Source information:
An RNA of 177 nucleotides, treated with DMS and 2A3 and read out base by base. The reactions ran in a buffer of 150 mM KOAc, 10 mM MgCl2 and 150 mM bicine (pH 8.5), at 24 C. DMS adducts were read by reverse transcription with MarathonRT. 2A3 adducts were read by reverse transcription with SuperScript II with manganese. Reactivities are given for positions 27 through 126. Source: RMDB library OK1LIB, as collected in RNAgym.
RNA sequence: GGGAACGACUCGAGUAGAGUCGAAAAGAAGUGGCAGGGACAUGCCCCAGAAGCUCGUUCUAGCAACAUAUGUUUGGCUAGUUCGAGCGAUUAGUCUCGAGGAGCGUCCUCUCGCCUGUUUACGAGACCUAUUAGUAUCAUUCGUGAUACUAAUAGGAAAAGAAACAACAACAACAAC
Reactivity to DMS in 0.01 (KOAc 150mM, MgCl2 10mM, bicine 150mM(pH8.5), 24C), signal-to-noise 9, nucleotides 027 to 126: g000a200a110g010u010g000g020c030a090g010g020g020a110c150a100u020g010c020c000c030c040a070g010a150a120g000c000u000c000g010u000u000c010u000a010g000c000a030a030c040a220u050a120u050g010u030u010u010g010g020c000u000a000g000u000u000c000g000a000g010c000g000a010u020u020a080g020u020c010u000c030g000a060g000g000a170g010c100g000u000c000c000u010c010u000c030g010c020c030u010g000u010u010u010a190c010g000a050g000a180
Reactivity to 2A3 in 0.01 (KOAc 150mM, MgCl2 10mM, bicine 150mM(pH8.5), 24C), signal-to-noise 9, nucleotides 027 to 126: g100a080a020g090u110g040g000c020a020g050g030g050a070c080a110u170g020c000c000c000c010a030g020a110a010g000c000u000c000g000u000u000c000u000a000g010c010a020a060c030a080u290a080u300g150u110u080u100g150g020c000u000a000g000u000u000c000g000a000g000c000g000a000u000u050a030g070u010c010u010c060g020a140g010g020a120g040c040g020u020c000c000u040c000u010c020g010c010c010u020g020u000u030u030a070c050g010a010g080a080